RNA sequence: GGGAACGACUCGAGUAGAGUCGAAAAUAAUGCGGGCACCAGUAACUCCUACCCUAUGGUGUCUCCUAUCUGUAGGUCCCAGUGGAGCGAUGAAGCCUGCCCAGCGGGGCUUGGCGGUCAUGGGCUUGGAAUUCCUUCUAUUCGUAGAAGGAAUUCCAAAAGAAACAACAACAACAAC
Reactivity to DMS in 0.01 (KOAc 150mM, MgCl2 10mM, bicine 150mM(pH8.5), 24C), signal-to-noise 2, nucleotides 027 to 126: u030a070a030u020g000c260g000g000g000c020a040c020c000a050g010u020a060a220c160u030c060c030u010a120c000c040c040u000a070u010g010g020u000g010u000c020u000c040c010u010a130u030c050u020g000u000a030g020g000u000c010c040c010a130g000u020g010g000a040g000c040g000a090u020g000a080a300g000c000c000u000g010c000c000c000a190g000c170g000g020g010g000c000u010u010g020g030c030g000g000u000c020a000u000g030g010g020c040u000u000
Reactivity to 2A3 in 0.01 (KOAc 150mM, MgCl2 10mM, bicine 150mM(pH8.5), 24C), signal-to-noise 3, nucleotides 027 to 126: u230a000a120u190g040c040g010g020g000c000a000c000c000a010g070u100a040a070c020u040c040c010u050a080c010c000c000u050a060u060g000g020u030g040u000c010u010c000c000u070a110u060c000u040g190u100a030g020g030u030c000c000c010a060g060u100g030g020a040g030c050g010a020u060g070a060a020g010c000c020u050g020c010c000c010a100g160c140g050g000g000g000c030u040u070g010g000c030g000g000u060c060a100u100g000g120g020c020u010u010
This 177-nucleotide RNA was probed chemically with DMS and 2A3. It was measured as part of the RMDB library RFM100. The reactions ran in a buffer of 150 mM KOAc, 10 mM MgCl2 and 150 mM bicine (pH 8.5), at 24 C. 2A3 adducts were read by reverse transcription with SuperScript II with manganese. Reactivities are rounded to 0.1 and cut off at 0 and 3.